[RMDB]
RNA sequence: GGGAACGACUCGAGUAGAGUCGAAAAAUAGGCUUAUCAAGAGAGGUGGAGGGACUGGCUCGAUGAAACCCGGCAGCCAGAAAUGGUGCCAAGUCCUGCAGCGGAAACGUUGAAAGAUGAGCCGAUGCGCGCCACAACUUCGGUUGUGGCAAAAGAAACAACAACAACAAC
Reactivity to 2A3 in 0.01 (KOAc 150mM, MgCl2 10mM, bicine 150mM(pH8.5), 24C), signal-to-noise 4, nucleotides 027 to 129: a000u130a040g000g000c000u000u000a010u020c070a130a040g060a030g000a040g240g000u140g040g070a070g010g000g000a010c000u000g020g000c010u030c080g120a120u110g050a030a060a060c030c000c000g040g030c040a010g070c010c000a010g000a000a060a040u050g020g000u000g020c000c000a030a020g000u020c000c000u030g010c010a000g010c010g000g050a070a030a040c050g020u050u060g010a030a060a030g000a010u030g000a000g000c010c010g020a030u160g040c110g010c030
Reactivity to DMS in 0.01 (KOAc 150mM, MgCl2 10mM, bicine 150mM(pH8.5), 24C), signal-to-noise 4, nucleotides 027 to 129: a030u050a000g020g040c020u030u030a010u020c070a150a030g000a150g010a110g030g010u000g050g030a220g000g000g000a080c010u030g010g060c000u000c090g060a070u100g010a120a080a080c070c060c040g020g060c080a010g000c020c010a050g030a000a060a060u040g030g050u030g000c000c020a030a070g000u030c040c000u030g040c040a040g000c030g040g000a050a080a130c070g020u000u000g010a140a100a130g050a050u000g020a030g000c000c000g030a050u030g020c230g030c090